[RMDB]
RNA sequence: GGGAACGACUCGAGUAGAGUCGAAAAGUUGCAUGACUGAUGCUUGGUAUCAAUAUGAUACCUCUGUGUGUUCAGCAGACCCUCGCUGGAUUCAUGGAACCUCUUCUACACGUCGACAAGAUAUGUUAGAGUAUAAAUUAUUCGUAAUUUAUACUCUAAAAGAAACAACAACAACAAC
Reactivity to 2A3 in 0.01 (KOAc 150mM, MgCl2 10mM, bicine 150mM(pH8.5), 24C), signal-to-noise 9, nucleotides 027 to 126: g090u080u100g030c040a040u080g080a190c060u100g050a050u060g040c050u060u060g000g010u000a010u010c020a130a180u190a180u300g000a000u000a000c000c000u000c000u000g030u000g000u000g010u020u030c000a010g000c010a030g040a260c020c000c010u020c060g000c010u010g000g020a040u030u020c010a020u030g020g010a020a040c010c020u050c000u090u030c020u050a040c050a010c100g060u040c010g040a050c040a090a060g030a110u080a050u250g080u030u020
Reactivity to DMS in 0.01 (KOAc 150mM, MgCl2 10mM, bicine 150mM(pH8.5), 24C), signal-to-noise 6, nucleotides 027 to 126: g000u010u000g010c060a050u010g010a060c060u010g000a100u010g010c070u000u010g000g000u000a000u000c000a150a150u010a110u020g000a020u000a010c010c000u000c030u000g010u010g010u010g000u000u000c020a050g000c020a130g000a120c050c030c040u010c080g010c010u000g020g000a030u010u000c030a010u020g000g000a050a100c060c040u000c050u000u010c050u000a090c060a070c070g010u000c020g000a090c090a080a100g000a090u010a100u010g010u000u010